Chemical mapping of a 207-nucleotide RNA with 2A3. The RNA was probed in 150 mM KOAc, 10 mM MgCl2 and 150 mM bicine (pH 8.5) at 24 C. Values cover nucleotides 27 to 156.

RNA sequence: GGGAACGACUCGAGUAGAGUCGAAAAUGGCCGAUCGCUCGCUGUUUUUGUGGCUGGCUUUCAGCGGGCUGGAGGAGCCGGGAGCGGAGGCGGAGGACCGAGCCAAAAACGUCAGCCGAGGCCGGGCAAUAUCGUGGACUGUUCGCAGUCCACGAAACUAUCGCAUCCGAUUCGUCGGAUGCGAUAGAAAAGAAACAACAACAACAAC
Reactivity to 2A3 in 0.01 (KOAc 150mM, MgCl2 10mM, bicine 150mM(pH8.5), 24C), signal-to-noise 1, nucleotides 027 to 156: u080g020g010c000c030g010a090u050c050g010c020u020c000g030c000u020g040u060u030u040u130u070g140u060g030g030c030u040g000g000c030u000u080u020c020a010g000c000g050g000g000c040u060g020g060a030g020g040a040g000c020c030g000g040g020a040g080c030g020g090a030g040g030c070g000g020a060g020g030a030c030c020g000a030g030c030c040a060a020a020a020a020c020g050u040c040a030g020c020c020g000a030g000g020c000c000g000g000g050c010a040a040u080a040u100c010g000u000g010g000a000c010u010g040u040u090c270g000c130a000g000u000c000c010a000c010g000a000a000a000